RNA sequence: GGGAACGACUCGAGUAGAGUCGAAAACGUACCGAUCCUAGUCGUGACUAGCUGAUCUCUAGUCAUGCUGACAUGUAGUACGUCAUGCAUCGGAUCCGCGCGAUCCACUAGGUGAUCUAUACUGAUCUGAUGAUACUGACUUCGGUCAGUAUCAUCAAAAAGAAACAACAACAACAAC
Reactivity to 2A3 in 0.01 (KOAc 150mM, MgCl2 10mM, bicine 150mM(pH8.5), 24C), signal-to-noise 5, nucleotides 027 to 126: c050g040u050a060c000c030g020a030u070c010c010u040a030g030u040c040g040u020g010a010c000u010a010g030c030u010g030a050u000c020u000c000u030a000g000u000c010a010u040g000c010u030g030a050c010a040u190g080u140a080g100u110a090c130g040u020c020a020u170g020c000a040u070c080g020g000a000u020c020c010g230c050g030c200g140a010u000c000c000a010c020u020a010g070g000u070g070a020u030c090u070a190u030a160c110u080g040a040u020c010
Reactivity to DMS in 0.01 (KOAc 150mM, MgCl2 10mM, bicine 150mM(pH8.5), 24C), signal-to-noise 5, nucleotides 027 to 126: c110g010u010a160c050c050g000a100u000c030c010u000a020g010u010c150g020u000g000a020c000u000a010g000c090u010g000a060u000c100u010c010u000a010g010u000c020a010u000g000c110u000g000a050c030a270u010g010u020a160g030u010a070c170g010u000c040a020u010g020c030a090u000c110g010g000a020u000c000c050g040c260g020c140g000a020u000c000c020a060c040u000a040g000g010u000g010a110u010c070u000a100u010a100c140u010g020a040u000c050
An RNA of 177 nucleotides, treated with 2A3 and DMS and read out base by base. For DMS the reverse transcriptase was MarathonRT. For 2A3, 6,509 sequencing reads were counted. Values cover nucleotides 27 to 126. The DMS profile rests on 4,952 reads.